Source information: This 207-nucleotide RNA was probed chemically with 2A3. The 2A3 profile rests on 565 reads. Conditions: 150 mM KOAc, 10 mM MgCl2 and 150 mM bicine (pH 8.5), 24 C. Reactivities are given for positions 27 through 156. The data come from the RNA Mapping Database (RMDB), library M2RFPK. High 2A3 reactivity points to a flexible backbone, as in loops and unpaired stretches.
RNA sequence: GGGAACGACUCGAGUAGAGUCGAAAAGGCAAUAACGAACUAAUUCUAAGCAAGUAACGGAGAAAUGCCAGGGUCACUAUCUAGCCAUAAUAGUGCUUGACAGUAUGAUACUAACUGAACAAUAAGUAAAAGCGCUGGUACUUCGGUACCAGCGCAAGAUGCAGAUGGUGUUCGCACCAUCUGCAUCAAAAGAAACAACAACAACAAC
Reactivity to 2A3 in 0.01 (KOAc 150mM, MgCl2 10mM, bicine 150mM(pH8.5), 24C), signal-to-noise 1, nucleotides 027 to 156: g000g010c030a020a080u180a070a030c070g110a010a020c090u040a070a040u180u050c040u210a030a050g070c040a040a000g050u070a110a000c000g070g000a020g050a020a150a000u100g010c020c000a000g030g000g030u010c000a010c050u020a020u080c020u120a050g000c040c030a010u030a100a040u050a090g020u050g020c020u020u060g000a020c000a000g020u050a040u100g020a020u030a030c020u050a080a000c050u020g040a020a050c010a010a070u060a120a000g000u050a170a110a000a070g010c020g000c000u000g000g000u000a000c000u020u000c170g020g000u000a000c000c020a020g000c000g020c000a000a000